[RMDB]
Chemical mapping of a 177-nucleotide RNA with 2A3 and DMS. For DMS, 4,543 sequencing reads were counted. Values are in units of 0.01, from 0 to 300, in steps of 10. The reactions ran in a buffer of 150 mM KOAc, 10 mM MgCl2 and 150 mM bicine (pH 8.5), at 24 C.
RNA sequence: GGGAACGACUCGAGUAGAGUCGAAAAGAUAUGGAGAUAGCUUUUGACGGCUGCAAUUCGGAAACGAAUUGGCAGCCGAUAAGCUAAUUCCUAAGUCAAAAGCAUUCUUAGUUCGCUAAGAAUGCAAGAAUAGAAUAGCGUUCGCGCUAUUCUAUUCAAAAGAAACAACAACAACAAC
Reactivity to 2A3 in 0.01 (KOAc 150mM, MgCl2 10mM, bicine 150mM(pH8.5), 24C), signal-to-noise 3, nucleotides 027 to 126: g010a030u080a040u130g010g000a030g010a040u010a020g000c010u110u140u140u150g300a250c140g000g000c000u000g000c000a000a000u000u000c000g030g020a080a050a060c010g000a010a020u020u030g200g080c010a000g000c000c010g000a000u000a000a000g010c000u010a000a030u040u000c000c000u000a120a020g030u020c020a080a040a040a110g010c000a010u000u000c000u000u030a040g010u050u090c290g010c190u010a000a000g000a000a020u000g000c000a010a000
Reactivity to DMS in 0.01 (KOAc 150mM, MgCl2 10mM, bicine 150mM(pH8.5), 24C), signal-to-noise 4, nucleotides 027 to 126: g000a040u010a300u010g000g020a030g010a080u000a010g010c000u000u000u010u000g010a190c100g020g000c000u000g020c000a020a010u000u000c000g020g000a080a080a210c000g000a010a000u000u000g020g030c000a000g010c010c000g010a000u010a010a010g000c000u000a010a060u000u000c000c000u000a080a150g000u010c040a080a090a110a140g000c000a000u000u000c000u000u000a000g020u000u010c220g030c010u000a000a000g000a030a000u000g010c000a020a040